RNA sequence: GGGAACGACUCGAGUAGAGUCGAAAAGAUAUGGACCGUGGUGCAUCGAUCAAUGGAAUUCUAGUCUCUACUCGGAAACGAGUAGAGGACUAGAAUUCCAUUGGGAGCAUCAUCACGGUCCUAAGUCGAAGACAUGGAUGUUCGCAUCCAUGUCUUCAAAAGAAACAACAACAACAAC
Reactivity to DMS in 0.01 (KOAc 150mM, MgCl2 10mM, bicine 150mM(pH8.5), 24C), signal-to-noise 1, nucleotides 027 to 126: g000a020u000a300u000g020g000a000c020c010g010u000g020g010u000g030c120a070u000c000g000a300u020c000a010a000u000g000g000a050a010u000u010c000u000a000g010u000c000u000c000u000a000c000u000c000g010g000a230a070a180c000g020a020g010u000a010g020a040g000g020a000c000u000a000g030a000a000u000u000c000c000a000u000u010g050g040g030a300g000c170a050u000c000a010u000c000a000c000g010g010u000c000c000u000a040a010g010u000c140